[RMDB]
RNA sequence: GGGAACGACUCGAGUAGAGUCGAAAAGCGCGUGAAGGCGGUGACGAUUCUUUCUUGUAAAACAAAAUGAGGUCGUUGGGGGCGUGUCCAGGCUCACCGUCGUUUUGUUUAAGAACGGUUUGUGCGCCGAGGCAAUAUCUUUCGAGAUAUUGCCUCGAAAAGAAACAACAACAACAAC
Reactivity to DMS in 0.01 (KOAc 150mM, MgCl2 10mM, bicine 150mM(pH8.5), 24C), signal-to-noise 2, nucleotides 027 to 126: g000c040g020c030g010u000g000a090a090g010g000c040g000g000u010g020a150c030g000a060u000u000c020u000u000u000c050u000u000g010u010a090a070a060a230c060a030a020a050a050u000g010a070g000g000u000c040g010u000u010g000g000g000g000g010c030g020u010g000u010c030c050a110g000g000c060u000c030a030c010c130g010u000c000g050u000u010u000u000g010u010u010u010a070a070g010a030a040c050g000g000u000u010u000g020u010g000c080g000c020